An RNA of 207 nucleotides, treated with 2A3 and DMS and read out base by base. Conditions: 150 mM KOAc, 10 mM MgCl2 and 150 mM bicine (pH 8.5), 24 C. The DMS profile rests on 4,051 reads. High 2A3 reactivity points to a flexible backbone, as in loops and unpaired stretches. The data come from the RNA Mapping Database (RMDB), library OK3TST. 2A3 adducts were read by reverse transcription with SuperScript II with manganese.
[RMDB]
RNA sequence: GGGAACGACUCGAGUAGAGUCGAAAAGAUGAUUGAAGUGUUACAAAAAACCCACAGUGGAAACCUAUCAGAUGCAAGAAAUGUGUUGAACGCCCUUUGUGAAAAGAAUGGCUCUUUUGUCAAUAGAAGCACCAAGGACCACUUCAUAAGUACAGUGGUAUAGUUAGCGUUUCGACGCUAACUAUACAAAAGAAACAACAACAACAAC
Reactivity to 2A3 in 0.01 (KOAc 150mM, MgCl2 10mM, bicine 150mM(pH8.5), 24C), signal-to-noise 3, nucleotides 027 to 156: g060a020u130g020a030u030u100g010a080a000g030u020g040u130u130a090c080a030a150a030a050a110a150c030c040c030a080c050a050g060u090g030g050a080a050a040c010c010u060a070u070c030a040g050a130u090g030c030a040a060g060a160a170a050u120g060u020g010u060u070g020a070a030c060g020c000c000c020u020u060u040g060u030g030a080a060a000a030g070a020a030u060g010g020c030u000c070u010u130u080u050g020u020c020a020a020u060a150g070a110a020g030c020a010c050c010a000a030g030g000a020c010c020a000c000u040u030c040a050u050a140a040g090u080a050c080a040g100u130g070
Reactivity to DMS in 0.01 (KOAc 150mM, MgCl2 10mM, bicine 150mM(pH8.5), 24C), signal-to-noise 2, nucleotides 027 to 156: g000a080u000g010a100u010u000g030a070a080g030u000g000u010u000a210c040a000a090a120a100a090a120c010c020c040a060c070a130g000u010g010g000a070a060a070c030c030u000a080u000c070a120g010a080u000g010c030a080a130g010a110a070a090u010g030u010g010u000u010g010a110a100c060g000c000c020c030u000u000u000g070u010g000a050a050a030a070g010a130a040u000g000g010c030u000c060u000u000u000u000g000u000c030a030a130u000a080g010a090a110g000c030a040c040c110a000a080g020g000a070c040c000a050c010u010u000c040a130u000a060a060g000u000a060c090a070g000u000g020